Source: RMDB library OK1LIB, as collected in RNAgym.
This 177-nucleotide RNA was probed chemically with 2A3.
Values cover nucleotides 27 to 126.
The reactions ran in a buffer of 150 mM KOAc, 10 mM MgCl2 and 150 mM bicine (pH 8.5), at 24 C.
The 2A3 profile rests on 1,084 reads.
For 2A3 the reverse transcriptase was SuperScript II with manganese.
[RMDB]
RNA sequence: GGGAACGACUCGAGUAGAGUCGAAAAGAAAAGAGCGUAAUCGCGUCUUGACGUGAGUGAGGCUAGACUGUAGGCUAUCCCAAGUGGGAUAGCAUACCUCACAAUACGCUGAUCUACAGUCAAAAGAGCACGUAUCCGGUUUCGACCGGAUACGUGCAAAAGAAACAACAACAACAAC
Reactivity to 2A3 in 0.01 (KOAc 150mM, MgCl2 10mM, bicine 150mM(pH8.5), 24C), signal-to-noise 1, nucleotides 027 to 126: g210a000a120a020a000g010a000g020c000g020u040a000a010u050c000g000c000g030u000c080u140u240g090a010c000g000u000g030a000g000u010g000a000g000g000c020u000a070g000a000c000u000g000u000a000g020g000c000u000a010u000c000c000c010a160a240g150u300g080g000g000a000u000a000g000c000a020u010a010c000c050u000c000a000c000a000a070u090a000c000g000c020u020g040a010u000c000u000a000c000a000g000u010c010a020a020a020a020g080a000